Chemical mapping of a 177-nucleotide RNA with DMS and 2A3. The reactions ran in a buffer of 150 mM KOAc, 10 mM MgCl2 and 150 mM bicine (pH 8.5), at 24 C.
RNA sequence: GGGAACGACUCGAGUAGAGUCGAAAACUUAACGCGUUCGCGCGUUAAGAAACAACAUAAACAUCGAGUUGACGAUGACACAAAUACCGACAGUGUAGACGGAAAGCAUUCGCUUCGGCGAAUGCAACAUACUUCUUCUCUUCGGAGAAGAAGUAUGAAAAGAAACAACAACAACAAC
Reactivity to DMS in 0.01 (KOAc 150mM, MgCl2 10mM, bicine 150mM(pH8.5), 24C), signal-to-noise 7, nucleotides 027 to 126: c000u000u000a010a000c000g000c000g030u000u010c220g040c020g030c000g010u000u000a000a000g000a110a110a070c100a070a090c100a060u000a110a110a160c020a030u000c010g010a130g010u000u010g010a140c040g010a030u000g010a150c090a050c070a060a060a070u010a080c040c020g020a080c130a080g000u010g000u000a070g000a110c080g010g000a100a060a100g010c000a000u000u010c000g020c000u010u010c180g030g010c000g000a010a000u000g000c000a030a060
Reactivity to 2A3 in 0.01 (KOAc 150mM, MgCl2 10mM, bicine 150mM(pH8.5), 24C), signal-to-noise 7, nucleotides 027 to 126: c000u000u000a010a000c000g020c000g020u010u060c200g010c000g010c000g100u000u000a000a000g000a020a050a000c040a020a000c000a060u240a100a160a010c010a040u020c010g020a050g110u070u070g170a110c030g020a030u070g060a010c010a010c010a110a160a020u160a110c040c020g090a070c080a120g090u050g080u240a060g060a060c040g030g050a110a050a020g000c000a000u000u000c000g000c000u040u040c180g060g000c000g000a000a000u000g000c000a000a000
DMS adducts were read by reverse transcription with MarathonRT. Source: RMDB library M2PK50, as collected in RNAgym. Values cover nucleotides 27 to 126.